The record gives the reactivity of an RNA of 177 nucleotides to DMS and 2A3. The data come from the RNA Mapping Database (RMDB), library TTRINS. DMS adducts were read by reverse transcription with MarathonRT. 2A3 adducts were read by reverse transcription with SuperScript II with manganese.
RNA sequence: GGGAACGACUCGAGUAGAGUCGAAAAGAUAUGGAUGCAAGAGGGAGCGUCCCUUGCUUCUGUAUUCGGAAACGAAUACAAUAGCAUGUGUAGGAUAGGACGCGACGAUCUCUUGCAUCCUAAGUCACAGAGGGAUAUAGUUCGCUAUAUCCCUCUGAAAAGAAACAACAACAACAAC
Reactivity to DMS in 0.01 (KOAc 150mM, MgCl2 10mM, bicine 150mM(pH8.5), 24C), signal-to-noise 6, nucleotides 027 to 126: g010a050u000a300u000g000g000a000u000g000c010a010a020g010a020g000g000g000a030g020c010g010u000c000c000c020u000u000g010c000u000u000c150u010g010u000a000u000u000c010g000g010a100a120a230c010g010a030a010u000a000c000a030a070u010a020g010c010a010u000g010u010g030u010a180g020g010a190u000a160g010g010a010c000g000c010g000a050c250g000a020u000c000u000c010u000u000g000c000a000u000c000c000u000a020a090g000u000c060a300
Reactivity to 2A3 in 0.01 (KOAc 150mM, MgCl2 10mM, bicine 150mM(pH8.5), 24C), signal-to-noise 3, nucleotides 027 to 126: g010a010u090a010u180g020g000a000u000g000c000a010a010g010a010g000g020g000a030g000c010g010u000c000c050c010u010u010g010c000u030u050c080u090g010u010a000u000u010c000g010g010a080a050a050c010g010a000a000u000a000c040a010a080u060a040g000c010a020u040g100u100g200u300a200g230g300a300u170a210g000g010a000c020g010c000g040a080c000g000a000u000c000u000c000u000u010g010c010a000u000c000c000u010a000a000g010u000c010a000